[RMDB]
RNA sequence: GGGAACGACUCGAGUAGAGUCGAAAACUUCGUGAACAAGCGACGAUGCAUUAGGUCCUUCGUUAUCCAACCGAACCAUCGUUACUAGUGUUGGAAUAAAUCAAGAUAGGCAGGCUAUCAUAGAAAGAAUUAGUGUGUUAUUCGUAGCACGCUGGUUAAAAGAAACAACAACAACAAC
Reactivity to DMS in 0.01 (KOAc 150mM, MgCl2 10mM, bicine 150mM(pH8.5), 24C), signal-to-noise 9, nucleotides 027 to 126: c050u010u020c070g020u020g010a110a080c100a100a060g010c050g010a010c030g000a020u000g000c020a030u020u010a110g000g000u000c050c070u010u010c080g010u010u010a050u010c050c060a140a020c010c010g000a130a140c300c030a020u010c020g010u000u000a090c040u010a080g010u010g010u000u000g000g000a060a080u020a040a060a070u030c080a090a080g010a030u010a030g010g010c130a080g010g000c010u000a020u000c020a070u020a100g000a070a080a090g010
Reactivity to 2A3 in 0.01 (KOAc 150mM, MgCl2 10mM, bicine 150mM(pH8.5), 24C), signal-to-noise 8, nucleotides 027 to 126: c010u090u060c040g140u100g110a100a030c050a080a030g030c010g030a010c010g010a010u020g000c020a030u020u080a010g000g030u030c030c000u070u100c050g090u040u100a060u040c030c010a000a010c000c010g010a010a000c000c000a020u030c010g010u000u010a020c010u040a040g040u010g010u050u020g020g000a060a050u070a080a070a050u130c060a070a000g000a030u020a000g020g050c050a010g080g000c010u010a000u010c010a020u030a030g100a020a090a000g060
Source: RMDB library OK1LIB, as collected in RNAgym. An RNA of 177 nucleotides, treated with DMS and 2A3 and read out base by base. The RNA was probed in 150 mM KOAc, 10 mM MgCl2 and 150 mM bicine (pH 8.5) at 24 C. For DMS the reverse transcriptase was MarathonRT. 2A3 adducts were read by reverse transcription with SuperScript II with manganese. As a SHAPE reagent, 2A3 marks flexible, mostly unpaired nucleotides at the ribose 2'-OH.